Structure probing data (2A3) for a 207-nucleotide construct. Conditions: 150 mM KOAc, 10 mM MgCl2 and 150 mM bicine (pH 8.5), 24 C. Source: RMDB library M2RFOK, as collected in RNAgym.

RNA sequence: GGGAACGACUCGAGUAGAGUCGAAAAUGGGCUACCAGUAAGCGAAAAAUGAUACAGGACGAAAAAAACAUAAUUCGAGAUUUAUCAGGAUGGAUUUUUUUAGGUAUCUAUCAAAACUAUUCUGAUGCAACGUAGAGCACGUUCGCGUGCUCUACAAGGCCCAAUUUUAGUUCGCUAAAAUUGGGCCAAAAGAAACAACAACAACAAC
Reactivity to 2A3 in 0.01 (KOAc 150mM, MgCl2 10mM, bicine 150mM(pH8.5), 24C), signal-to-noise 1, nucleotides 027 to 156: u080g000g060g000c000u040a040c050c000a020g060u070a010a040g000c010g050a040a040a000a040a110u100g030a020u050a050c050a090g030g060a050c090g080a070a000a000a010a010a180a030c080a000u140a090a070u210u090c050g020a020g040a140u070u090u170a000u060c000a000g030g000a000u010g000g000a050u000u000u000u000u000u120u000a020g060g000u160a070u270c030u000a020u000c030a000a000a000a020c000u000a010u000u000c000u000g000a020u050g050c050a050a030c050g000u000a000g000a000g000c000a000c010g000u020u020c090g000c000g110u020g000c020u000c000u000a000c000a000a000